[RMDB]
This 170-nucleotide RNA was probed chemically with 2A3 and DMS. The 2A3 profile rests on 126,942 reads.
RNA sequence: GGGAACGACUCGAGUAGAGUCGAAAAAGGACGUCCUCCCUGUCUCCUCGGUUCUUCUUCGAUCCGGACCGGCUCAUCUCGGCAAGAGGCGGCAGUCCUCAGUACUCUUACUCUUUCCUAUAAAGAGACCGUUUUACGUUCGCGUAAAACAAAAGAAACAACAACAACAAC
Reactivity to 2A3 in 0.01 (KOAc 150mM, MgCl2 10mM, bicine 150mM(pH8.5), 24C), signal-to-noise 9, nucleotides 027 to 129: a000g040g010a020c020g070u060c000c010u030c010c000c010u030g030u010c030u020c010c010u030c010g030g000u050u010c010u100u010c010u070u100c080g090a090u030c030c020g020g020a040c010c010g020g000c010u020c030a110u020c050u030c030g030g000c040a070a030g030a030g030g000c000g000g010c020a020g020u040c000c000u030c010a020g020u060a070c010u010c010u060u040a070c010u010c000u050u050u020c030c030u110a100u150a150a100a010g060a010g020a020c030c070
Reactivity to DMS in 0.01 (KOAc 150mM, MgCl2 10mM, bicine 150mM(pH8.5), 24C), signal-to-noise 9, nucleotides 027 to 129: a020g000g000a000c050g000u030c000c030u030c010c030c010u040g000u050c020u000c020c030u000c010g040g030u010u000c000u030u020c000u000u060c110g030a110u020c080c000g000g000a100c100c070g010g000c020u000c050a030u030c040u020c030g040g050c110a130a090g000a000g030g010c050g030g040c100a040g000u000c020c030u020c040a110g020u050a080c050u000c000u010u000a110c040u020c070u010u010u000c050c050u060a060u060a070a060a030g030a000g030a120c140c130
Overview:
The RNA was probed in 150 mM KOAc, 10 mM MgCl2 and 150 mM bicine (pH 8.5) at 24 C. DMS adducts were read by reverse transcription with MarathonRT.